[RMDB]
Structure probing data (2A3 and DMS) for a 177-nucleotide construct. DMS adducts were read by reverse transcription with MarathonRT. For 2A3 the reverse transcriptase was SuperScript II with manganese. Reactivities are given for positions 27 through 126.

RNA sequence: GGGAACGACUCGAGUAGAGUCGAAAACAACGACUGGUUCCUGAUCGGCGGCACGGUCUUGGUCACGUUCGCAACCGGUUGGAUCUCCUACACUGAGUGAUACCGAUGAGAGCAAACAUCAAAUCGAGUUUAGCUCUGUCUUCGGACAGAGCUAAACAAAAGAAACAACAACAACAAC
Reactivity to 2A3 in 0.01 (KOAc 150mM, MgCl2 10mM, bicine 150mM(pH8.5), 24C), signal-to-noise 1, nucleotides 027 to 126: c010a010a000c030g080a010c040u060g000g020u050u000c020c000u020g000a070u070c010g020g000c060g040g000c100a050c210g070g070u070c000u060u120g030g040u030c030a010c070g000u000u080c020g000c080a020a030c040c010g010g010u030u050g050g000a040u000c010u000c000c010u080a050c060a050c060u110g030a030g050u080g060a030u060a080c000c030g010a000u040g030a000g000a050g020c080a080a000a090c050a060u100c030a010a020a110u070c030g020a020
Reactivity to DMS in 0.01 (KOAc 150mM, MgCl2 10mM, bicine 150mM(pH8.5), 24C), signal-to-noise 2, nucleotides 027 to 126: c110a120a080c010g030a020c040u000g000g000u000u000c060c010u000g000a010u000c000g010g020c080g000g010c030a100c160g000g040u010c130u060u010g000g000u000c020a170c100g030u000u020c020g010c300a080a040c070c010g000g020u010u020g000g000a150u000c060u000c020c070u000a130c200a060c060u000g000a060g030u000g020a150u020a040c100c020g000a030u000g010a150g010a070g000c020a060a040a060c090a050u000c010a040a040a090u030c100g000a110